[RMDB]
Record summary
An RNA of 177 nucleotides, treated with DMS and 2A3 and read out base by base. The RNA was probed in 150 mM KOAc, 10 mM MgCl2 and 150 mM bicine (pH 8.5) at 24 C. DMS adducts were read by reverse transcription with MarathonRT.
RNA sequence: GGGAACGACUCGAGUAGAGUCGAAAACAGCGCAGGCGUCAUGUAAGACCGGACAACGAGGGUGUCGAACAGCAAUCCGAUCAUGAUCGUGGUGCCGAUUUGGCCGACGACGCGUAGAUCGCUGGCCGGAGUAAAUGCGAUUCGUCGCAUUUACUCCAAAAGAAACAACAACAACAAC
Reactivity to DMS in 0.01 (KOAc 150mM, MgCl2 10mM, bicine 150mM(pH8.5), 24C), signal-to-noise 3, nucleotides 027 to 126: c050a090g000c040g030c060a110g000g000c000g010u000c030a030u010g020u000a140a040g030a040c040c000g000g000a060c040a100a050c090g010a110g010g020g010u000g030u000c030g000a050a080c070a120g020c210a090a200u010c030c030g000a020u020c030a040u010g020a100u000c010g010u000g020g010u010g010c010c000g010a110u010u010u000g020g020c090c060g010a040c090g000a000c020g020c050g000u010a060g010a060u000c010g010c010u020g010g030c030c080
Reactivity to 2A3 in 0.01 (KOAc 150mM, MgCl2 10mM, bicine 150mM(pH8.5), 24C), signal-to-noise 4, nucleotides 027 to 126: c030a010g020c040g000c080a070g080g030c010g010u010c030a020u080g050u040a100a010g020a040c020c010g020g020a030c040a140a010c070g030a060g050g130g010u080g050u060c060g050a070a050c030a050g100c050a040a100u000c010c000g020a030u130c070a150u090g140a050u060c030g030u030g030g020u100g040c000c010g030a030u070u050u110g010g000c000c020g030a050c050g000a000c010g000c000g020u030a030g030a150u050c010g000c000u030g030g040c000c030